Source information
This 177-nucleotide RNA was probed chemically with 2A3 and DMS. The reactions ran in a buffer of 150 mM KOAc, 10 mM MgCl2 and 150 mM bicine (pH 8.5), at 24 C.

RNA sequence: GGGAACGACUCGAGUAGAGUCGAAAACUUUGCGACGGUUGAGCAUGCUGGUUGCGGUCACCGAAUAAGCAUGCACCCAUCCGCGAGCACUAGGCGGAACUACGUAACACUUCGAUGCGGCAGUAGAAUAGAGCAUACAUUUCGAUGUAUGCUCUAUAAAAGAAACAACAACAACAAC
Reactivity to 2A3 in 0.01 (KOAc 150mM, MgCl2 10mM, bicine 150mM(pH8.5), 24C), signal-to-noise 5, nucleotides 027 to 126: c010u080u080u170g030c050g050a050c030g060g000u010u050g010a020g020c010a020u030g000c000u070g030g130u130u170g180c050g030g050u280c110a120c190c010g030a040a060u130a070a000g020c010a000u020g000c010a040c000c020c000a060u020c010c020g020c030g040a050g050c030a060c120u070a040g120g000c000g000g040a050a030c020u060a010c070g050u040a100a010c030a020c090u080u110c070g060a060u120g030c040g030g000c060a020g020u090a020g090a090
Reactivity to DMS in 0.01 (KOAc 150mM, MgCl2 10mM, bicine 150mM(pH8.5), 24C), signal-to-noise 8, nucleotides 027 to 126: c040u000u000u010g020c030g020a150c200g010g000u000u000g010a130g000c010a010u000g010c000u000g020g040u000u000g010c040g010g000u010c140a110c060c020g020a070a080u010a140a050g010c000a010u000g000c030a160c090c050c020a100u000c030c030g010c030g010a120g020c050a070c130u000a070g000g010c030g010g000a060a100c060u000a040c070g000u000a090a100c070a070c080u000u000c080g000a100u010g010c040g000g000c060a090g010u000a060g020a120

Notes: 2A3 adducts were read by reverse transcription with SuperScript II with manganese. The DMS profile rests on 11,132 reads. It was measured as part of the RMDB library OK2TRN. For 2A3, 9,285 sequencing reads were counted.